[RMDB]
RNA sequence: GGGAACGACUCGAGUAGAGUCGAAAAUGUAAAUAAUCGGUGGAGCGGCUGCAAAAGAGCCGUCUCGCUGGGUAAAAUCAGGAUGUGCCGCGGAACCCGCUCCUCAGCUAGUCACACUUCGGAAGCGCUUACGCUCACUUUUCGAAGUGAGCGUAAGAAAAGAAACAACAACAACAAC
Reactivity to DMS in 0.01 (KOAc 150mM, MgCl2 10mM, bicine 150mM(pH8.5), 24C), signal-to-noise 2, nucleotides 027 to 126: u040g000u010a060a070a140u020a080a030u020c030g000g010u000g000g000a060g000c030g020g000c010u000g030c130a120a080a140a230g000a040g000c010c010g000u020c050u000c000g020c020u020g000g000g020u040a050a090a100a100u040c090a050g000g000a140u030g020u020g040c020c020g000c010g000g020a100a150c080c010c020g000c050u010c020c000u010c040a050g040c000u000a030g000u010c020a020c060a020c060u000u000c020g000g010a080a050g000c150g010
Reactivity to 2A3 in 0.01 (KOAc 150mM, MgCl2 10mM, bicine 150mM(pH8.5), 24C), signal-to-noise 3, nucleotides 027 to 126: u110g010u030a110a060a050u100a070a040u160c060g000g030u100g100g020a000g030c000g030g000c020u100g050c090a010a150a190a010g100a030g000c000c000g110u000c000u000c000g030c000u020g020g030g020u060a020a040a000a070u170c040a020g070g020a020u040g050u060g060c000c010g000c020g000g030a100a190c000c000c040g020c020u010c020c000u060c010a000g000c000u020a010g010u020c010a020c000a000c040u000u030c000g020g030a070a020g040c010g000